[RMDB]
This 177-nucleotide RNA was probed chemically with DMS and 2A3. Conditions: 150 mM KOAc, 10 mM MgCl2 and 150 mM bicine (pH 8.5), 24 C. For DMS, 9,725 sequencing reads were counted.
RNA sequence: GGGAACGACUCGAGUAGAGUCGAAAACAUAUCAACGGUUGCAUACCCUGGAAGGACACGAAGAUGAGGUAUAUGGGUUAGAAUGGUCACCUCAUGAUGAACCUAUAUUGGCAUCCAGUUCAACUGAAAUAGCCUAUGGAUUCGUCCAUAGGCUAUUAAAAGAAACAACAACAACAAC
Reactivity to DMS in 0.01 (KOAc 150mM, MgCl2 10mM, bicine 150mM(pH8.5), 24C), signal-to-noise 8, nucleotides 027 to 126: c080a080u010a160u000c070a070a120c120g010g020u000u000g010c060a100u010a110c060c030c030u000g010g010a110a130g000g010a070c070a080c100g010a110a090g000a040u010g010a100g000g010u010a040u000a040u000g010g000g000u000u010a040g000a160a040u000g010g010u010c130a080c210c100u000c040a030u010g000a130u010g000a050a040c020c010u000a040u000a060u000u000g010g000c030a030u000c030c050a100g000u000u000c070a040a140c060u000g010a080
Reactivity to 2A3 in 0.01 (KOAc 150mM, MgCl2 10mM, bicine 150mM(pH8.5), 24C), signal-to-noise 2, nucleotides 027 to 126: c030a020u170a040u210c060a000a100c090g090g040u030u050g010c000a030u090a150c040c000c000u020g060g030a080a060g030g000a020c010a000c140g090a050a020g010a050u030g010a000g020g060u050a020u000a020u050g000g000g000u030u020a030g040a120a040u030g070g000u080c060a050c070c060u030c010a000u040g030a040u010g010a010a030c010c000u010a020u010a030u140u020g080g000c000a010u050c030c000a020g000u060u070c030a120a090c040u020g040a010